Background:
An RNA of 177 nucleotides, treated with DMS and 2A3 and read out base by base. The RNA was probed in 150 mM KOAc, 10 mM MgCl2 and 150 mM bicine (pH 8.5) at 24 C. It was measured as part of the RMDB library OK2TRN. For DMS the reverse transcriptase was MarathonRT.

[RMDB]
RNA sequence: GGGAACGACUCGAGUAGAGUCGAAAAGCUGCAGAAAGGCUCUGUGCGUGCUGUUGAACGUUGCCGGUACUCUGGCAACCCACGAGCAGGACAGAGGCGAGUAAUAUCGCUUUUGCCUUCAUGUGUGGCUUAUGAGUGCUUUCGAGCACUCAUAAGCAAAAGAAACAACAACAACAAC
Reactivity to DMS in 0.01 (KOAc 150mM, MgCl2 10mM, bicine 150mM(pH8.5), 24C), signal-to-noise 3, nucleotides 027 to 126: g010c020u000g000c010a070g010a130a050a060g010g020c000u000c020u000g010u000g020c020g030u010g030c030u000g010u000u000g000a110a140c300g010u010u000g010c000c020g010g040u020a190c300u010c020u010g000g000c000a020a010c000c080c010a080c090g000a060g020c020a080g000g000a030c030a020g020a020g010g000c000g010a040g010u010a090a100u020a170u000c000g030c010u000u000u010u010g010c000c000u000u000c120a130u000g020u000g010u000g000
Reactivity to 2A3 in 0.01 (KOAc 150mM, MgCl2 10mM, bicine 150mM(pH8.5), 24C), signal-to-noise 2, nucleotides 027 to 126: g010c020u040g000c000a010g130a150a080a000g030g010c010u020c010u020g000u050g150c090g200u050g010c000u060g050u300u090g030a110a030c050g000u000u010g000c010c000g000g040u100a120c200u180c030u180g000g000c020a010a010c000c000c000a030c030g030a000g010c010a020g060g010a010c010a010g020a010g020g030c020g000a000g000u010a000a080u020a010u050c030g020c000u080u060u210u190g020c000c000u030u030c060a090u080g070u020g030u060g100